Notes
Chemical mapping of a 177-nucleotide RNA with DMS. The data come from the RNA Mapping Database (RMDB), library OK2TRN. DMS (dimethyl sulfate) methylates the pairing face of unpaired adenines and cytosines. For DMS the reverse transcriptase was MarathonRT.
[RMDB]
RNA sequence: GGGAACGACUCGAGUAGAGUCGAAAAAAGAGCUGAGAGAUUCGUUAUCAUCAGAAAAGAAAAGUCAGUUACGAAUUAGUUGUUAGGGGCUUUGCUGCUCAAAGUGUGUAGUGGACAAUAGGCAAAAGAGGGAUAAAGGAUUCGUCCUUUAUCCCUCAAAAGAAACAACAACAACAAC
Reactivity to DMS in 0.01 (KOAc 150mM, MgCl2 10mM, bicine 150mM(pH8.5), 24C), signal-to-noise 2, nucleotides 027 to 126: a040a050g010a100g020c040u000g000a130g010a150g010a100u000u000c080g010u000u000a080u000c020a070u000c080a190g010a100a040a110a130g030a070a010a030a100g030u000c050a040g010u000u000a030c050g000a060a090u000u000a090g020u000u000g010u000u010a130g010g010g010g010c040u000u000u000g000c090u000g020c150u010c060a070a060a070g010u000g030u000g010u010a040g010u010g000g010a020c090a050a040u020a090g010g010c090a030a020a050a130

For DMS, 1,624 sequencing reads were counted. Reactivities are given for positions 27 through 126.